Chemical mapping of a 177-nucleotide RNA with 2A3 and DMS.
RNA sequence: GGGAACGACUCGAGUAGAGUCGAAAAAGCUGUUCUGUGCCGACUGGGUCUGGCAUGAGCGGUGUCCAGAUCUGAAAGGCUAAUGUGUGCAAAUGAGCGCUGCGCUCUGCCUAGGAAUUCCGCUUCCGCUAGAUGGCCAAUUCGUUGGCCAUCUAGCAAAAGAAACAACAACAACAAC
Reactivity to 2A3 in 0.01 (KOAc 150mM, MgCl2 10mM, bicine 150mM(pH8.5), 24C), signal-to-noise 1, nucleotides 027 to 126: a000g060c060u070g000u080u020c030u040g090u070g040c000c020g030a060c030u070g030g020g030u020c020u000g020g000c010a030u070g020a040g060c080g030g000u010g060u000c010c020a000g000a010u000c020u030g080a100a100a030g000g000c000u030a040a050u110g040u000g060u080g070c020a000a020a160u200g010a080g020c090g030c130u140g030c030g050c020u040c020u040g000c000c000u010a050g070g100a060a040u110u030c000c000g060c000u070u020c040c020
Reactivity to DMS in 0.01 (KOAc 150mM, MgCl2 10mM, bicine 150mM(pH8.5), 24C), signal-to-noise 1, nucleotides 027 to 126: a110g040c040u000g000u000u000c090u000g000u000g010c000c030g010a300c130u000g010g020g010u000c010u000g020g000c020a050u010g000a040g000c090g000g000u000g020u110c010c010a040g000a010u010c010u010g020a100a100a260g000g020c010u010a050a050u000g010u020g020u000g010c060a050a070a100u010g010a050g000c030g050c120u030g020c040g000c020u010c000u000g000c010c040u000a110g020g010a050a100u000u000c030c040g010c040u010u000c150c100

Source: RMDB library OK2TRN, as collected in RNAgym. For 2A3 the reverse transcriptase was SuperScript II with manganese. For DMS, 1,045 sequencing reads were counted. For 2A3, 1,165 sequencing reads were counted.